[RMDB]
RNA sequence: GGGAACGACUCGAGUAGAGUCGAAAAUGAAUGGAGCUUCCAUCGUCGAAAGUAUAGGCUGUGGCCCAGUCAAGGCGCUCACGACGUACUGCCGCAUUGGCGAUGUCUUCCAGACGGGCUUUAAGGAAAUCUACAGUGGGUUCGCCCACUGUAGAUUAAAAGAAACAACAACAACAAC
Reactivity to DMS in 0.01 (KOAc 150mM, MgCl2 10mM, bicine 150mM(pH8.5), 24C), signal-to-noise 4, nucleotides 027 to 126: u020g000a110a120u010g020g000a060g010c130u010u010c090c040a040u000c050g000u010c020g020a080a100a070g010u000a030u010a110g010g030c070u010g020u010g010g010c050c010c010a110g020u010c190a090a110g010g000c170g000c030u000c030a040c050g010a050c070g010u000a040c080u000g010c140c060g020c160a130u010u010g020g000c020g020a030u000g010u000c060u000u000c040c030a080g010a120c100g010g010g030c080u000u010u000a060a090g010g000a050
Reactivity to 2A3 in 0.01 (KOAc 150mM, MgCl2 10mM, bicine 150mM(pH8.5), 24C), signal-to-noise 2, nucleotides 027 to 126: u140g070a020a060u100g000g000a000g060c050u100u040c030c010a010u060c020g030u020c020g030a090a050a050g060u050a070u040a130g110g000c100u040g050u040g060g010c010c020c030a040g090u170c120a050a160g060g000c070g020c060u100c080a040c040g060a010c040g010u050a110c050u050g010c010c050g000c090a130u030u080g000g000c000g020a020u040g000u030c000u040u010c000c010a010g040a050c060g010g020g010c000u080u100u070a110a060g130g020a090

An RNA of 177 nucleotides, treated with DMS and 2A3 and read out base by base. The RNA was probed in 150 mM KOAc, 10 mM MgCl2 and 150 mM bicine (pH 8.5) at 24 C. For 2A3 the reverse transcriptase was SuperScript II with manganese.